An RNA of 177 nucleotides, treated with 2A3 and DMS and read out base by base. The RNA was probed in 150 mM KOAc, 10 mM MgCl2 and 150 mM bicine (pH 8.5) at 24 C. Source: RMDB libraries RFM100 and RFMREP, as collected in RNAgym. 2A3 is a SHAPE reagent: it acylates the 2'-hydroxyl of flexible nucleotides of all four kinds.
RNA sequence: GGGAACGACUCGAGUAGAGUCGAAAAAGGAGGACACCGGUAGCCGGGCAGUUUGACUGGGGCGGUACGCGCUUGAAAAGAUAUCGAGCGCGCCCUAAGCCUAUCUCAGCCGAGUCAGAGACUCGGCGAGUAGUAGGAAUUUCGAUUCCUACUACUCAAAAGAAACAACAACAACAAC
Reactivity to 2A3 in 0.01 (KOAc 150mM, MgCl2 10mM, bicine 150mM(pH8.5), 24C), signal-to-noise 9, nucleotides 027 to 126: a000g040g020a030g020g010a020c010a020c040c020g030g040u070a040g110c030c010g000g020g010c040a070g020u050u090u120g070a070c050u040g010g000g010g000c020g010g010u060a040c030g000c000g010c000u010u010g030a050a090a050a040g200a090u200a070u150c010g000a000g000c000g000c000g000c010c000c000u060a110a010g000c000c000u080a090u090c050u020c040a010g000c000c000g000a000g000u010c060a050g060a010g010a290c000u000c000g000g000c000
Reactivity to DMS in 0.01 (KOAc 150mM, MgCl2 10mM, bicine 150mM(pH8.5), 24C), signal-to-noise 9, nucleotides 027 to 126: a060g000g000a120g000g000a060c040a050c060c030g010g010u010a120g020c040c040g010g010g010c070a070g010u010u000u000g000a150c060u000g010g010g010g000c070g000g010u010a100c080g000c000g000c000u000u000g000a020a090a120a140g020a160u030a090u000c000g000a020g010c000g000c030g010c300c020c030u000a050a100g010c010c020u000a080u010c040u000c080a210g020c000c000g000a020g000u010c020a170g010a200g000a080c000u000c000g010g000c010